[RMDB]
RNA sequence: GGGAACGACUCGAGUAGAGUCGAAAAUUAGAUUUAGUCGGAAAAUGACACAUCAAGGUUUUCAAGAGCUAAAGAUUGCGAUAUCUCGAUACUUACCCGAAGAUAUUGCAACCAAUCCACAUUUAGAAUAUCGUUACGUCUUCGGACGUAACGAUAUAAAAGAAACAACAACAACAAC
Reactivity to DMS in 0.01 (KOAc 150mM, MgCl2 10mM, bicine 150mM(pH8.5), 24C), signal-to-noise 2, nucleotides 027 to 126: u060u030a190g020a130u000u020u050a040g040u000c070g000g000a070a060a100a100u000g010a170c180a060c270a070u020c230a180a030g000g010u000u010u000u030c100a000a090g000a040g010c020u000a020a010a020g000a110u000u000g020c000g000a000u000a000u000c000u000c030g010a200u020a060c160u120u020a000c300c110c000g050a140a040g000a010u000a000u000u000g020c020a030a030c070c050a080a070u040c020c000a030c170a060u000u040u010a110g000a200
Reactivity to 2A3 in 0.01 (KOAc 150mM, MgCl2 10mM, bicine 150mM(pH8.5), 24C), signal-to-noise 4, nucleotides 027 to 126: u070u040a040g110a030u070u090u020a000g030u030c020g050g060a000a010a020a080u090g100a020c010a000c030a070u180c090a070a150g050g000u010u020u000u010c050a110a050g050a010g000c000u120a110a020a060g070a270u020u070g000c000g000a000u000a000u000c000u000c000g090a040u060a200c050u160u200a160c150c010c050g020a020a000g000a000u010a010u000u010g010c000a010a000c000c060a020a030u080c050c030a090c040a220u080u100u130a110g110a110